Background: The record gives the reactivity of an RNA of 207 nucleotides to DMS and 2A3. DMS adducts were read by reverse transcription with MarathonRT. The RNA was probed in 150 mM KOAc, 10 mM MgCl2 and 150 mM bicine (pH 8.5) at 24 C.
RNA sequence: GGGAACGACUCGAGUAGAGUCGAAAACAGAUAAGAAAAGACCGAGAGGUUCAAGCUUAUAGGGCAGAAAGCGGGGGACAGCAGUACUAAACAUUCCCUGUGGCCGAGACGAAGGUAGUACUCCAACAAAACGAGUACUAGUUCGCUAGUACUCGAACCUAUAUUCUCCGUUCGCGGAGAAUAUAGGAAAAGAAACAACAACAACAAC
Reactivity to DMS in 0.01 (KOAc 150mM, MgCl2 10mM, bicine 150mM(pH8.5), 24C), signal-to-noise 1, nucleotides 027 to 156: c050a080g010a170u000a000a100g000a120a090a250a130g010a110c030c050g030a280g010a210g010g030u000u010c030a130a160g000c000u000u000a100u000a100g000g000g000c030a070g030a030a060a110g030c010g000g000g010g070g040a100c050a040g020c030a010g020u000a150c080u010a040a100a070c040a170u000u000c020c000c000u010g020u020g030g010c010c000g000a160g000a090c020g010a110a070g000g020u000a040g050u000a030c060u010c030c050a070a080c110a040a050a160a110c030g000a010g060u010a020c010u000a000g010u000u010c260g060c020u000a000g030u000a020c000u000c000g000a020a030
Reactivity to 2A3 in 0.01 (KOAc 150mM, MgCl2 10mM, bicine 150mM(pH8.5), 24C), signal-to-noise 3, nucleotides 027 to 156: c020a000g110a130u150a160a020g050a010a180a040a000g030a030c050c030g040a040g010a030g080g000u120u100c040a020a020g010c010u040u040a020u110a130g070g000g000c040a050g120a120a090a000g030c030g000g010g000g010g000a000c020a030g020c040a010g070u040a020c040u050a020a130a030c020a040u030u030c000c010c000u030g020u050g020g010c030c000g020a020g000a020c050g020a070a000g040g000u020a020g010u000a030c020u000c040c020a020a040c020a060a150a030a050c010g000a000g000u000a000c000u000a000g000u010u040c090g040c110u000a000g000u000a000c000u020c000g010a010a010
The data come from the RNA Mapping Database (RMDB), library M2RFPK.